[RMDB]
RNA sequence: GGGAACGACUCGAGUAGAGUCGAAAAUACAAAGUCUGAGAAUUUCCUAUAAACUGAUGGACGUUGGCUAAUUUGGAGCAUUCUAUGGUGCAUACAGCCCAAUGGAAUCACUAUCAGAAGGAGCACGCAACACAUGAGAUUUCGAUCUCAUGUGUUGAAAAGAAACAACAACAACAAC
Reactivity to 2A3 in 0.01 (KOAc 150mM, MgCl2 10mM, bicine 150mM(pH8.5), 24C), signal-to-noise 5, nucleotides 027 to 126: u210a010c040a010a120a020g080u000c040u100g030a030g090a170a130u050u060u050c000c000u080a090u130a160a140a060c030u030g010a000u030g000g020a020c020g020u050u030g030g000c040u100a150a120u260u110u130g070g020a040g010c010a000u100u000c070u260a140u300g080g000u040g000c020a060u100a220c050a020g020c030c020c010a000a020u030g000g050a100a040u110c030a030c070u070a060u020c000a010g040a060a040g030g030a010g050c050a000c070g070
Reactivity to DMS in 0.01 (KOAc 150mM, MgCl2 10mM, bicine 150mM(pH8.5), 24C), signal-to-noise 6, nucleotides 027 to 126: u020a100c110a110a100a090g010u000c040u000g000a130g020a140a110u000u000u000c000c010u000a140u010a100a080a150c110u000g000a040u000g000g000a120c040g010u000u010g010g010c070u020a050a140u000u000u000g020g010a070g020c100a030u000u000c090u010a090u000g000g010u000g010c030a090u000a150c150a100g000c150c020c010a020a050u010g000g010a090a050u010c090a070c040u000a050u000c040a040g010a080a100g010g010a040g010c090a050c210g010